This 207-nucleotide RNA was probed chemically with DMS and 2A3. The 2A3 profile rests on 2,193 reads. It was measured as part of the RMDB library M2RFPK.

RNA sequence: GGGAACGACUCGAGUAGAGUCGAAAAAACUCAGCUAGGGAGAGUAUAACAUUCAUGUUGACGAGACCUAGACGAAACACAGAGGAAAAUUAUUAAUCACUGGAUAGUAUUAGUAAUCACUCUGUGUAAAACUCUUCUACGUUCGCGUAGAAGAGAAUCUAUAGAACAUGUUCGCAUGUUCUAUAGAAAAAGAAACAACAACAACAAC
Reactivity to DMS in 0.01 (KOAc 150mM, MgCl2 10mM, bicine 150mM(pH8.5), 24C), signal-to-noise 2, nucleotides 027 to 156: a100a100c060u010c010a070g020c040u020a010g000g010g000a260g000a130g020u000a080u000a030a090c010a060u000u000c060a100u010g030u010u010g010a130c030g000a280g040a080c010c000u000a000g000a300c100g000a180a150a040c000a000c010a010g000a030g000g000a120a120a080a050u000u010a010u000u000a000a020u000c090a100c020u000g030g010a110u020a080g010u000a040u000u000a030g010u000a020a010u000c050a300c010u000c010u000g050u000g000u000a000a060a080a140c000u010c010u000u000c000u000a000c000g010u000u020c300g010c020g000u000a040g000a000a010g020a000g010a010a020
Reactivity to 2A3 in 0.01 (KOAc 150mM, MgCl2 10mM, bicine 150mM(pH8.5), 24C), signal-to-noise 3, nucleotides 027 to 156: a000a000c010u010c010a010g000c010u020a000g020g020g000a070g010a040g070u130a120u080a300a030c050a040u130u240c120a080u250g010u030u080g040a040c040g020a010g070a080c000c000u010a000g020a030c010g000a010a050a000c000a000c000a010g020a010g000g020a080a060a060a000u000u000a010u000u010a000a000u020c030a000c040u050g060g120a130u260a300g020u020a010u000u000a000g000u000a000a000u010c000a030c030u000c000u000g000u000g000u000a000a000a000a000c000u000c000u000u000c000u000a000c000g020u010u060c200g000c010g060u000a000g000a000a000g000a000g010a000a020